About this RNA:
An RNA of 207 nucleotides, treated with 2A3 and read out base by base.

[RMDB]
RNA sequence: GGGAACGACUCGAGUAGAGUCGAAAACCUAGCCGUUUGGCUCUGCGCCAGUCGGGUGUGAGAAGGGCCUAGUUCACUAUGGUGGUAAACAAGCUUCUCACGCAUGAGCAACCCGGCUAGUCCGCCACACCAGCAGUCGCACAGUGUGGCAGGGCAACAGACCCAAUUGGUUCGCCAAUUGGGUCUGAAAAGAAACAACAACAACAAC
Reactivity to 2A3 in 0.01 (KOAc 150mM, MgCl2 10mM, bicine 150mM(pH8.5), 24C), signal-to-noise 1, nucleotides 027 to 156: c000c010u020a000g140c000c000g000u000u200u170g000g020c000u000c020u070g020c000g000c110c000a090g110u110c200g050g050g040u110g040u000g000a000g020a000a000g000g050g080c030c050u080a020g020u090u190c030a030c090u080a110u300g270g000u070g020g060u090a060a090a090c060a000a060g000c020u000u000c000u000c000a000c000g040c020a000u080g000a000g020c030a130a300c000c000c000g000g010c000u000a000g000u000c000c000g000c000c000a000c000a000c020c090a030g000c020a060g150u250c060g060c050a040c040a180g000u000g000u000g000g000c000a030g000g000g060c000a030a010

2A3 adducts were read by reverse transcription with SuperScript II with manganese.